[RMDB]
RNA sequence: GGGAACGACUCGAGUAGAGUCGAAAAUACUUAGUUCCAAUUUAUAUUGCAAACAAGAUUAAUUUAGGCGAUUACUCACUAAGAUAUACCUAUUUCUACUAUGGUUAUAUUAGUCCAUUUCAUAGCCUUACACACCUGUAUUCGUACAGGUGUGUAAAAAAGAAACAACAACAACAAC
Reactivity to DMS in 0.01 (KOAc 150mM, MgCl2 10mM, bicine 150mM(pH8.5), 24C), signal-to-noise 4, nucleotides 027 to 126: u050a060c060u010u000a100g000u000u000c300c000a020a070u030u020u010a080u020a040u000u010g010c150a060a060a090c100a030a040g000a090u000u010a030a050u010u000u010a040g000g040c010g000a100u000u000a020c060u000c040a100c030u000a020a030g000a010u000a030u010a050c000c000u020a110u020u010u010c050u000a070c080u010a090u000g010g010u000u010a020u000a040u000u000a030g000u000c100c100a090u010u020u020c050a100u000a090g010c040c030
Reactivity to 2A3 in 0.01 (KOAc 150mM, MgCl2 10mM, bicine 150mM(pH8.5), 24C), signal-to-noise 5, nucleotides 027 to 126: u140a020c050u070u090a010g030u030u030c020c010a010a000u060u100u030a230u050a090u070u150g060c040a060a140a030c030a080a090g080a160u100u170a060a090u080u130u100a040g020g010c030g020a020u050u060a040c010u010c020a000c000u010a030a030g030a050u030a030u040a070c010c020u040a080u060u120u150c080u060a130c010u080a040u110g000g010u040u010a010u010a010u050u040a010g040u020c060c030a060u030u080u050c090a070u140a070g000c000c000